[RMDB]
RNA sequence: GGGAACGACUCGAGUAGAGUCGAAAAGAUGUCGUGCUGAAUUCCAUUGCACUCCUUCAUGUCUUCAUGCACCAUGCGCCCAGAGCAGCAAUACUGGAGAUGAACUCAAAGAACACACUCCUCAGUAGGAUUUGCAAGUAUUCGUACUUGCAAAUCCAAAAGAAACAACAACAACAAC
Reactivity to DMS in 0.01 (KOAc 150mM, MgCl2 10mM, bicine 150mM(pH8.5), 24C), signal-to-noise 2, nucleotides 027 to 126: g020a120u000g020u000c120g000u000g000c000u030g010a080a150u030u000c000c060a070u010u000g000c050a100c070u000c040c000u010u000c060a070u000g020u000c050u000u000c040a080u010g000c070a080c040c030a080u000g040c090g010c030c020c050a090g000a100g040c040a070g000c050a100a070u010a080c060u030g000g020a020g000a120u000g000a020a090c110u000c130a000a040a190g000a040a090c150a050c080a100c080u000c030c030u010c060a070g020u000a120
Reactivity to 2A3 in 0.01 (KOAc 150mM, MgCl2 10mM, bicine 150mM(pH8.5), 24C), signal-to-noise 2, nucleotides 027 to 126: g070a070u080g030u100c030g020u060g020c010u010g030a050a110u190u030c010c000a030u090u160g010c050a090c020u050c010c010u090u040c040a050u070g050u050c000u050u020c020a020u080g010c030a030c010c000a060u080g010c030g000c000c000c010a020g010a040g000c040a000g050c000a040a120u060a130c040u060g020g010a060g020a050u040g020a050a040c030u010c030a120a050a030g100a110a000c030a000c000a010c030u000c000c030u070c020a080g060u110a080

Chemical mapping of a 177-nucleotide RNA with DMS and 2A3. It was measured as part of the RMDB library OK2TST.